[RMDB]
Structure probing data (DMS and 2A3) for a 177-nucleotide construct. For 2A3 the reverse transcriptase was SuperScript II with manganese. The RNA was probed in 150 mM KOAc, 10 mM MgCl2 and 150 mM bicine (pH 8.5) at 24 C. The 2A3 profile rests on 4,354 reads. The data come from the RNA Mapping Database (RMDB), library RFMREP. Values cover nucleotides 27 to 126. For DMS, 2,479 sequencing reads were counted.
RNA sequence: GGGAACGACUCGAGUAGAGUCGAAAAACAAGCAUGUUUUCAAAUGGCACUAUGAGCUGCCAAUGAUGUAUCACCACCAUAUCUCAUUAUUCUCCAGUAAAUGUGAUAAUAAUGUCAUCUGUUAACAGAAAUAACUUCUGUUCGCAGAAGUUAUUUCAAAAGAAACAACAACAACAAC
Reactivity to DMS in 0.01 (KOAc 150mM, MgCl2 10mM, bicine 150mM(pH8.5), 24C), signal-to-noise 3, nucleotides 027 to 126: a080c080a110a120g020c130a130u000g000u010u000u000u000c050a050a070a120u010g010g030c020a020c050u000a080u010g000a110g020c170u010g000c040c060a060a110u000g000a070u000g010u000a050u010c030a080c040c030a100c060c030a040u000a040u010c040u000c040a010u000u010a120u010u000c060u000c020c050a060g000u010a070a080a090u010g010u000g010a040u020a040a030u000a040a030u010g000u000c050a020u010c060u000g000u010u010a040a060c150a110
Reactivity to 2A3 in 0.01 (KOAc 150mM, MgCl2 10mM, bicine 150mM(pH8.5), 24C), signal-to-noise 5, nucleotides 027 to 126: a000c020a050a010g110c060a070u070g060u050u080u030u040c070a110a130a120u090g000g020c010a010c030u120a160u300g110a050g040c060u020g010c010c020a020a010u070g020a020u050g050u090a050u060c030a020c070c000a020c000c010a040u030a080u110c030u000c020a000u000u060a020u070u010c050u020c020c010a010g070u170a090a180a170u080g040u080g040a010u010a060a020u040a020a020u040g040u030c030a060u020c050u080g080u130u090a070a010c030a050